[RMDB]
RNA sequence: GGGAACGACUCGAGUAGAGUCGAAAAGUGAGGUGGAGCAAAACUUAUAAAACCUAUCUCAGUUCGGAUUGUAGGCUGCAACUCGCCUACAUGAAGCUGGAGUUGCUAGUAAUCGCGAAUCAGAAUAGUCAUACUCCGAUUUCGAUCGGAGUAUGACAAAAGAAACAACAACAACAAC
Reactivity to DMS in 0.01 (KOAc 150mM, MgCl2 10mM, bicine 150mM(pH8.5), 24C), signal-to-noise 2, nucleotides 027 to 126: g020u030g000a050g000g020u020g000g010a060g010c100a110a020a070a120c110u000u020a100u020a060a040a040a090c060c090u000a080u000c010u010c030a030g000u010u010c010g000g000a060u000u000g010u010a000g000g010c000u000g000c140a070a050c200u010c060g000c030c000u030a020c060a010u000g010a220a090g000c030u020g000g050a080g000u000u000g020c000u000a080g000u000a040a060u000c060g020c080g010a050a060u000c080a100g020a080a090u000a080
Reactivity to 2A3 in 0.01 (KOAc 150mM, MgCl2 10mM, bicine 150mM(pH8.5), 24C), signal-to-noise 1, nucleotides 027 to 126: g140u060g010a020g090g060u020g000g020a080g010c040a000a010a030a070c090u140u040a030u140a300a100a040a060c020c010u030a030u100c040u000c030a040g040u140u160c020g000g010a010u000u030g010u010a000g020g010c000u040g000c040a110a080c020u020c060g000c010c000u000a030c000a010u050g020a000a020g000c010u040g030g030a050g060u060u060g000c020u000a000g000u110a050a120u080c070g000c060g170a010a000u110c000a100g080a240a050u150a090